[RMDB]
RNA sequence: GGGAACGACUCGAGUAGAGUCGAAAAGAAAACAAGUACCGAGAACAUUGUUUUCGCUGCUUGGCGUUGCCGUUUUGUGUUGCAGUUGGUUGGGUAACGCCGCAAAUACCAACCGAAAAGAGAGAUAGAUAUAUAGCGUAUUCGUACGCUAUAUAUCAAAAGAAACAACAACAACAAC
Reactivity to 2A3 in 0.01 (KOAc 150mM, MgCl2 10mM, bicine 150mM(pH8.5), 24C), signal-to-noise 5, nucleotides 027 to 126: g020a000a020a010a010c020a020a010g040u090a080c050c100g070a040g030a070a040c130a300u120u190g020u000u000u010u010c000g000c000u010g000c000u030u080g010g000c020g020u020u010g020c000c000g030u060u010u140u130g180u030g040u050u120g050c040a080g010u050u070g050g010u040u050g060g000g010u020a020a030c010g000c000c010g010c010a030a040a000u170a040c010c000a010a010c000c000g130a060a020a060a020g160a010g010a000g030a040u150a120
Reactivity to DMS in 0.01 (KOAc 150mM, MgCl2 10mM, bicine 150mM(pH8.5), 24C), signal-to-noise 6, nucleotides 027 to 126: g000a080a050a090a100c040a000a010g020u000a030c250c030g000a060g010a040a020c030a170u030u050g020u000u000u000u000c010g010c160u000g000c030u010u000g010g020c040g000u000u000g000c000c020g000u010u020u010u000g000u000g010u000u010g000c100a100g010u010u000g000g000u000u000g000g020g000u010a080a120c100g010c030c010g000c060a030a040a080u030a060c000c000a010a010c020c020g000a040a050a060a090g010a120g020a100g010a150u030a070